[RMDB]
The record gives the reactivity of an RNA of 207 nucleotides to 2A3 and DMS. For DMS the reverse transcriptase was MarathonRT. The DMS profile rests on 5,658 reads. Source: RMDB library RSTRND, as collected in RNAgym. The reactions ran in a buffer of 150 mM KOAc, 10 mM MgCl2 and 150 mM bicine (pH 8.5), at 24 C.
RNA sequence: GGGAACGACUCGAGUAGAGUCGAAAAGCAGUUUGUCCGCUUCCUAGAAUACUUGUGGUUUAGGAACCCGACCGUAGCGCACGCACACAAGUCCGUAUAGAGUCAAGCCUCGGGGCUUUAUACCAAACUUAGAGGAUCGCAUCUUGUACCCUGUUCGCUUAAACACUAAGUUCGCUUAGUGUUUAAGAAAAGAAACAACAACAACAAC
Reactivity to 2A3 in 0.01 (KOAc 150mM, MgCl2 10mM, bicine 150mM(pH8.5), 24C), signal-to-noise 4, nucleotides 027 to 156: g030c040a030g030u100u180u130g090u180c060c050g000c040u040u000c010c010u020a020g040a070a050u050a080c030u040u040g020u050g030g020u060u050u050a030g010g020a050a050c020c010c030g030a080c020c050g080u070a030g040c030g010c050a030c070g060c010a010c010a000c000a100a000g010u010c020c000g010u030a020u010a010g010a010g010u010c000a030a040g020c010c020u020c030g010g000g000g000c000u030u040u020a010u010a000c020c030a050a110a060c080u150u170a070g000a010g030g020a020u080c070g020c050a060u010c030u080u080g010u070a070c000c020c000u030g020u030u030c010g000
Reactivity to DMS in 0.01 (KOAc 150mM, MgCl2 10mM, bicine 150mM(pH8.5), 24C), signal-to-noise 2, nucleotides 027 to 156: g010c040a060g010u000u010u010g010u000c030c030g030c030u000u000c000c000u010a070g040a080a110u000a050c040u000u010g030u010g000g000u000u010u000a050g000g000a050a070c040c030c040g000a080c050c060g020u000a080g030c040g010c050a080c070g000c090a080c000a050c050a060a060g010u000c080c030g010u000a010u010a020g010a060g010u000c010a050a060g000c030c020u010c020g010g020g000g000c000u000u010u000a020u000a000c020c020a070a060a100c050u010u000a080g020a080g000g010a050u010c040g010c050a110u010c050u000u010g020u010a070c010c010c020u010g000u010u010c100g020